Chemical mapping of a 177-nucleotide RNA with 2A3 and DMS. The DMS profile rests on 740 reads. The reactions ran in a buffer of 150 mM KOAc, 10 mM MgCl2 and 150 mM bicine (pH 8.5), at 24 C. Source: RMDB library OK1LIB, as collected in RNAgym.
[RMDB]
RNA sequence: GGGAACGACUCGAGUAGAGUCGAAAACUCGAACCGCCAAUACCGAUUCCAGGGUCCGUACCCCUUCUCGAUAACCUUCCUGCCGGAUGCUACUACCAUCCGCGGUGUCCUCGCGCGAACGAGCAAUGCAGGGAUAGGAUUUCGAUCCUAUCCCUGCAAAAGAAACAACAACAACAAC
Reactivity to 2A3 in 0.01 (KOAc 150mM, MgCl2 10mM, bicine 150mM(pH8.5), 24C), signal-to-noise 3, nucleotides 027 to 126: c020u020c030g050a080a070c010c010g060c000c030a070a020u070a120c040c010g060a070u050u070c030c020a070g040g000g000u070c020c010g040u050a070c000c020c010c000u060u080c020u030c050g110a140u050a150a110c000c000u040u080c010c000u050g050c000c040g010g010a020u040g030c040u040a050c020u040a070c040c010a010u020c010c030g000c050g060g000u020g070u070c010c000u010c010g000c000g000c000g050a060a020c010g020a020g070c040a020a030u080
Reactivity to DMS in 0.01 (KOAc 150mM, MgCl2 10mM, bicine 150mM(pH8.5), 24C), signal-to-noise 1, nucleotides 027 to 126: c000u010c000g000a150a020c140c060g000c000c000a050a060u120a070c190c060g020a060u000u000c000c000a190g000g050g000u040c000c200g000u000a040c120c000c130c130u000u010c050u040c060g000a000u090a020a100c170c080u000u000c000c050u000g000c010c240g000g080a000u000g000c200u000a060c070u150a190c090c000a000u000c040c150g000c140g020g010u050g000u000c130c000u000c000g010c000g050c140g000a050a060c060g000a300g080c300a110a010u000